The record gives the reactivity of an RNA of 177 nucleotides to 2A3 and DMS. Values cover nucleotides 27 to 126. For 2A3 the reverse transcriptase was SuperScript II with manganese. For DMS, 4,340 sequencing reads were counted.
RNA sequence: GGGAACGACUCGAGUAGAGUCGAAAAGAUAUGGAUCGUAUGCUCGCAAGAGAACUCUUCGGAAACGAAGAGGUCUUGAUGACCGAGCAAUACAACGAUCCUAAGUCAAACCAGGCUUCGGCCUGGACUUUAUCAUCGAGUUCGCUCGAUGAUAAAGAAAAGAAACAACAACAACAAC
Reactivity to 2A3 in 0.01 (KOAc 150mM, MgCl2 10mM, bicine 150mM(pH8.5), 24C), signal-to-noise 4, nucleotides 027 to 126: g010a000u040a000u090g010g000a000u000c010g020u070a090u170g000c010u000c000g020c040a280a200g010a000g010a030a030c010u010c000u000u000c010g000g000a010a010a010c010g010a000a000g000a000g000g000u000c000u050u080g090a280u060g030a020c020c000g010a000g000c000a000a020u190a090c180a230a050c060g000a000u000c000c000u020a030a000g000u010c060a060a060a210c010c010a010g030g020c000u060u230c300g200g020c010c000u000g010g000a020
Reactivity to DMS in 0.01 (KOAc 150mM, MgCl2 10mM, bicine 150mM(pH8.5), 24C), signal-to-noise 4, nucleotides 027 to 126: g010a030u000a110u010g000g000a000u000c010g040u010a110u000g010c000u000c000g000c040a050a070g000a000g010a010a020c010u000c000u000u000c010g020g000a040a020a050c010g000a010a000g010a000g000g000u000c000u000u000g010a070u010g020a080c300c000g000a000g000c010a100a110u010a190c250a120a090c020g000a000u000c000c000u000a000a090g000u000c010a080a110a250c010c000a010g010g000c000u010u010c270g040g010c000c010u000g010g000a030